[RMDB]
RNA sequence: GGGAACGACUCGAGUAGAGUCGAAAAUCUUUGCGCUUCGGCGCAAAGAAAACGCCUGCUGCUCCGUGACCCGACCGUGAGACCGUCGGUCCAGCCCGCCGAAAACUAUGGUGUUCGCACCAUAGAAGAAUCUACCAUUGUUCGCAAUGGUAGAUUCAAAAGAAACAACAACAACAAC
Reactivity to DMS in 0.01 (KOAc 150mM, MgCl2 10mM, bicine 150mM(pH8.5), 24C), signal-to-noise 3, nucleotides 027 to 126: u000c000u000u010u010g000c030g030c000u010u000c220g040g030c030g030c000a000a010a000g000a000a050a110a140c180g010c020c000u020g010c050u000g000c010u000c020c050g010u000g010a080c070c020c020g000a040c060c030g000u000g010a150g000a110c120c120g000u000c010g010g000u000c020c040a110g000c030c000c040g030c050c040g000a040a070a060a190c000u000a010u010g010g020u000g000u000u010c210g020c000a000c000c000a000u010a000g000a060a060
Reactivity to 2A3 in 0.01 (KOAc 150mM, MgCl2 10mM, bicine 150mM(pH8.5), 24C), signal-to-noise 2, nucleotides 027 to 126: u000c010u000u000u000g010c010g010c010u030u090c270g110g010c000g000c030a010a010a000g000a030a050a000a010c040g020c000c010u060g060c020u030g000c010u010c040c010g080u060g060a080c040c020c020g010a020c030c020g040u040g050a140g020a090c030c020g050u030c020g010g020u010c000c030a020g000c000c000c000g030c000c030g110a100a070a010a020c000u000a000u010g000g010u000g040u040u070c190g030c060a000c000c000a000u000a010g000a010a020
Structure probing data (DMS and 2A3) for a 177-nucleotide construct.
The DMS profile rests on 2,223 reads.
The data come from the RNA Mapping Database (RMDB), library M2PK50.